[RMDB]
RNA sequence: GGGAACGACUCGAGUAGAGUCGAAAAGAUAUGGAGACUCGACUGUUGCGACGAAGUCGAUCGGAAACGAUCGACAGAGCAAUUGUCGAGGUCUCCUAAGUCAAAGUUGGGUCUUCGGACCCAACAACUUCAGUAAACACUUCGGUGUUUACUGAAGAAAAGAAACAACAACAACAAC
Reactivity to DMS in 0.01 (KOAc 150mM, MgCl2 10mM, bicine 150mM(pH8.5), 24C), signal-to-noise 5, nucleotides 027 to 126: g000a070u010a300u010g000g010a000g010a170c000u000c000g010a020c000u000g020u000u000g010c000g010a200c270g010a140a110g000u000c000g010a000u000c010g010g000a130a150a250c010g000a010u000c000g020a010c000a020g000a130g010c000a010a020u000u010g000u000c000g000a020g000g000u000c000u000c000c000u010a010a090g010u000c050a100a080a140g010u000u000g010g000g010u000c000u000u020c290g030g000a020c000c010c000a000a010c000a090a150
Reactivity to 2A3 in 0.01 (KOAc 150mM, MgCl2 10mM, bicine 150mM(pH8.5), 24C), signal-to-noise 1, nucleotides 027 to 126: g010a020u100a060u190g000g020a020g010a010c000u010c010g010a010c030u050g060u030u010g030c130g180a300c040g020a300a030g000u010c000g010a000u000c010g000g030a060a090a050c000g000a010u000c000g000a000c000a010g000a000g000c000a000a030u030u030g000u010c000g010a030g010g000u030c000u000c000c000u010a040a020g010u030c060a000a130a070g000u000u000g040g000g010u000c040u060u050c300g110g030a000c000c000c000a000a000c000a000a000
The record gives the reactivity of an RNA of 177 nucleotides to DMS and 2A3. Reactivities are given for positions 27 through 126. The RNA was probed in 150 mM KOAc, 10 mM MgCl2 and 150 mM bicine (pH 8.5) at 24 C. 2A3 adducts were read by reverse transcription with SuperScript II with manganese. For DMS the reverse transcriptase was MarathonRT.